[RMDB]
RNA sequence: GGGAACGACUCGAGUAGAGUCGAAAAGAACUGCUGGGUUCCCCUGAUGUCCAGUCCCUCCCCGCUCCUGGAGAAGGGAGACUCGGGAACGCCUAGCAUCUGAGGGACAAAGCCGCCCCCGGGCGCUGUAUCUAUCCCUUCGGGGAUAGAAAAAGAAACAACAACAACAAC
Reactivity to DMS in 0.01 (KOAc 150mM, MgCl2 10mM, bicine 150mM(pH8.5), 24C), signal-to-noise 5, nucleotides 027 to 129: g030a070a120c110u030g010c020u030g000g000g010u020u030c100c050c010c050u030g030a000u010g010u020c000c000a100g020u020c020c040c030u020c000c000c000c000g020c060u030c090c040u050g020g030a050g020a080a090g000g000g070a080g030a100c030u000c060g030g030g030a060a050c170g000c060c020u030a050g010c020a040u000c050u000g000a000g020g020g020a050c060a060a070a070g010c070c070g000c000c010c030c050c080g020g000g010c100g030c090u020g020u000a100
Reactivity to 2A3 in 0.01 (KOAc 150mM, MgCl2 10mM, bicine 150mM(pH8.5), 24C), signal-to-noise 6, nucleotides 027 to 129: g040a060a030c060u040g020c000u010g000g030g010u040u040c000c000c000c000u060g060a080u190g100u030c040c050a030g040u000c010c000c000u020c000c000c000c010g040c060u090c040c040u120g050g030a150g030a130a080g030g010g000a040g020a020c020u010c030g000g000g010a050a020c050g060c020c040u020a020g020c000a000u030c040u040g020a110g010g020g000a030c070a040a120a040g010c020c030g030c000c000c000c000c020g010g010g000c030g000c020u010g030u030a080
An RNA of 170 nucleotides, treated with DMS and 2A3 and read out base by base. Conditions: 150 mM KOAc, 10 mM MgCl2 and 150 mM bicine (pH 8.5), 24 C. The data come from the RNA Mapping Database (RMDB), library 15KLIB. Values cover nucleotides 27 to 129. Values are in units of 0.01, from 0 to 300, in steps of 10.